[RMDB]
RNA sequence: GGGAACGACUCGAGUAGAGUCGAAAAGGUGGUAUUCGUACCACCAAAAAUCCUAAGUCUCCAACAGCAAAUGUUGUCAGCUCCUAUCGGAAACGAUAGCGAGCUUGGAUUUACAUUUGACAUGGAGAUAUGGAAAAAAGAGCCAUUCGUGGCUCAAGGUCUUACAGAGGUUCGCCUCUGUAAGACCAAAAGAAACAACAACAACAAC
Reactivity to 2A3 in 0.01 (KOAc 150mM, MgCl2 10mM, bicine 150mM(pH8.5), 24C), signal-to-noise 1, nucleotides 027 to 156: g070g000u000g000g000u020a060u040u110c090g070u050a010c000c000a000c000c010a000a000a000a000a000u060c050c000u110a190a010g020u000c000u000c030c000a050a050c020a190g030c020a000a000a000u010g000u020u040g020u010c000a000g000c000u010c000c000u000a030u010c000g030g100a220a000a040c000g000a000u000a030g010c060g000a000g000c020u000u020g010g000a020u300u170u130a020c010a010u000u000u010g080a080c030a080u050g000g020a000g010a000u010a070u020g020g050a000a100a100a000a000a000g050a000g000c000c030a040u160u140c300g110u030g000g000c000u000c000a010a000